[RMDB]
RNA sequence: GGGAACGACUCGAGUAGAGUCGAAAAAAUUAACUGCAUGUGGUGGUGUUCACCUAUAGUAUGCACCUACAGUCCCAGCUACUCAGGAGGCUGAGGUGGGAGGAUCACUUGAGCCCCAGGAGGUCGAGGCUGCAGUGAGCCGAGAUCACCCCACUGCCCUGAUAGCUCUUUUCGAAGAGCUAUCAGGAAAAGAAACAACAACAACAAC
Reactivity to 2A3 in 0.01 (KOAc 150mM, MgCl2 10mM, bicine 150mM(pH8.5), 24C), signal-to-noise 2, nucleotides 027 to 156: a000a000u180u100a050a040c090u070g020c000a040u250g000u040g010g110u100g000g000u000g050u050u020c000a060c070c030u090a090u090a170g220u160a130u210g050c010a010c000c010u160a290c040a000g020u050c010c000c000a000g020c020u060a010c020u070c120a030g000g010a100g040g000c000u040g010a000g030g000u010g000g010g040a110g000g010a000u000c000a000c000u090u120g080a010g030c000c000c000c020a160g070g050a090g100g000u100c060g050a100g000g020c010u040g030c030a000g000u020g000a010g010c030c010g020a000g010a020u000c000a010c030c000c000c000a000c000u000g000c030
An RNA of 207 nucleotides, treated with 2A3 and read out base by base. For 2A3 the reverse transcriptase was SuperScript II with manganese. For 2A3, 713 sequencing reads were counted.